[RMDB]
RNA sequence: GGGAACGACUCGAGUAGAGUCGAAAAGUAAAGGUUCGCCUUUACAAAAAAGCGUACUACUGAUGGGAACUUGGAUUUACAUCUCCCCACCUCCCAAAUAGGAGAGGAUGUUGUCAGUUCCGUCAGUAUCGCAAAAAGUCUAUGUUCGCAUAGACAAGUUACUGUUCAUCUUCGGAUGAACAGUAACAAAAGAAACAACAACAACAAC
Reactivity to 2A3 in 0.01 (KOAc 150mM, MgCl2 10mM, bicine 150mM(pH8.5), 24C), signal-to-noise 4, nucleotides 027 to 156: g000u010a000a000a010g040g020u050u150c180g160c020c020u020u010u020a050c060a000a150a010a000a000a000g050c040g020u110a050c040u000a000c000u020g000a000u070g120g050g020a020a010c050u110u180g200g000a060u300u300u200a020c030a020u020c060u080c100c070c000c010a070c010c040u040c020c050c010a190a300a150u300a120g010g010a010g000a010g040g000a010u010g010u030u020g000u010c000a000g000u010u000c000c000g000u000c010a010g000u000a010u120c010g000c030a000a040a020a090a000g010u010c000u000a020u000g020u020u060c170g000c120a000u000a000g000a000c010a000a000
Reactivity to DMS in 0.01 (KOAc 150mM, MgCl2 10mM, bicine 150mM(pH8.5), 24C), signal-to-noise 2, nucleotides 027 to 156: g020u000a000a000a040g030g000u010u000c250g070c010c010u000u000u000a070c010a000a060a090a120a080a110g000c010g010u000a100c120u000a030c000u010g010a070u020g010g100g000a020a010c030u000u010g000g020a100u000u010u000a050c000a020u000c010u010c110c010c030c020a220c090c010u000c040c120c090a080a180a200u000a120g010g000a080g000a300g010g020a070u000g010u000u000g030u000c010a040g010u000u000c020c000g000u000c010a020g070u000a000u000c040g050c060a070a050a100a100a140g010u000c000u000a010u000g000u000u000c300g020c030a000u000a010g000a020c010a040a100

An RNA of 207 nucleotides, treated with 2A3 and DMS and read out base by base. Values cover nucleotides 27 to 156. The data come from the RNA Mapping Database (RMDB), library RNAMAK. The RNA was probed in 150 mM KOAc, 10 mM MgCl2 and 150 mM bicine (pH 8.5) at 24 C. For DMS, 3,660 sequencing reads were counted.